[RMDB]
RNA sequence: GGGAACGACUCGAGUAGAGUCGAAAAGAUAUGGAUCGCCCAUGGGAGCUGUGGUUCGGAAACGAACCAGUAGCAUCGAUCAUGGCGAUCCUAAGUCAAAACUACGUACGCUUCGGCGUACGUAGAACGAAGUAACGAUCUUCGGAUCGUUACUUCGAAAAGAAACAACAACAACAAC
Reactivity to 2A3 in 0.01 (KOAc 150mM, MgCl2 10mM, bicine 150mM(pH8.5), 24C), signal-to-noise 2, nucleotides 027 to 126: g000a010u010a000u040g000g000a000u000c000g030c100c170c040a000u020g050g090g150a250g030c000u020g020u010g050g000u000u020c010g000g000a010a000a000c000g010a020a000c000c000a000g040u120a000g000c010a050u300c250g130a130u010c020a010u010g010g000c000g000a000u000c000c010u010a000a000g000u000c000a000a000a170a180c010u010a000c000g000u000a000c000g000c020u020u100c300g180g000c020g000u000a010c000g000u000a000g000a010a010
Reactivity to DMS in 0.01 (KOAc 150mM, MgCl2 10mM, bicine 150mM(pH8.5), 24C), signal-to-noise 2, nucleotides 027 to 126: g010a000u010a020u000g000g000a000u000c010g010c300c050c080a010u010g030g000g010a160g050c000u000g040u000g000g010u000u000c020g000g000a010a010a010c010g000a010a000c000c010a000g010u020a020g050c000a270u000c300g000a150u010c010a000u000g000g000c020g000a010u000c000c000u000a000a090g020u000c000a110a040a150a230c000u000a010c010g010u000a010c000g020c000u000u020c260g090g000c000g000u000a000c010g010u000a000g000a050a110

Chemical mapping of a 177-nucleotide RNA with 2A3 and DMS. For DMS the reverse transcriptase was MarathonRT. The 2A3 profile rests on 4,978 reads. Reactivities are given for positions 27 through 126. For DMS, 2,045 sequencing reads were counted.